Description:
An RNA of 207 nucleotides, treated with DMS and 2A3 and read out base by base. In probing experiments dimethyl sulfate is read out at A N1 and C N3, which are open when not base-paired. For DMS the reverse transcriptase was MarathonRT. 2A3 adducts were read by reverse transcription with SuperScript II with manganese. Source: RMDB library RSTRND, as collected in RNAgym.
RNA sequence: GGGAACGACUCGAGUAGAGUCGAAAAAGGCAUAGUUGAGCUUGAAUUGCGUUUCGUAGGUUACGGCUACGUUAAAACGUUACAGUUAAAUAUAACUGCUAAAAACGAAAACAAUUCUUUCGCUUUAGCUGCCUAAAAACCAGCUAGCGAAGAUCCUAGACGUAGUAAAGUUCGCUUUACUACGUCUAAAAGAAACAACAACAACAAC
Reactivity to DMS in 0.01 (KOAc 150mM, MgCl2 10mM, bicine 150mM(pH8.5), 24C), signal-to-noise 1, nucleotides 027 to 156: a070g000g020c010a130u000a050g010u010u000g010a090g000c030u000u000g000a090a060u010u000g000c050g010u000u000u010c000g000u000a090g060g020u000u000a070c030g040g010c000u000a020c050g060u010u000a020a100a090a070c020g010u010u010a120c010a090g020u010u000a130a100a090u000a040u000a030a020c000u010g000c040u000a040a050a020a300a030c010g000a010a040a120a100c030a040a040u000u000c000u010u010u010c110g000c000u000u000u010a010g030c010u000g000c020c000u020a040a100a060a150a110c140c000a070g000c020u000a060g020c040g010a080a050g000a130u000c030c070u010
Reactivity to 2A3 in 0.01 (KOAc 150mM, MgCl2 10mM, bicine 150mM(pH8.5), 24C), signal-to-noise 5, nucleotides 027 to 156: a000g100g000c080a080u120a080g060u040u110g050a020g010c040u050u060g040a080a040u110u060g030c050g050u030u040u080c020g000u020a020g030g020u080u070a030c080g050g000c030u020a020c010g050u080u090a030a070a020a010c010g000u010u040a010c000a010g010u000u050a010a280a090u230a090u040a130a030c010u020g040c040u110a090a120a030a020a030c050g080a040a050a010a040c050a040a060u070u010c000u020u100u030c000g000c000u110u080u070a000g000c000u000g000c010c000u060a070a070a010a000a000c010c000a000g000c000u000a000g000c000g000a000a010g010a030u030c000c010u000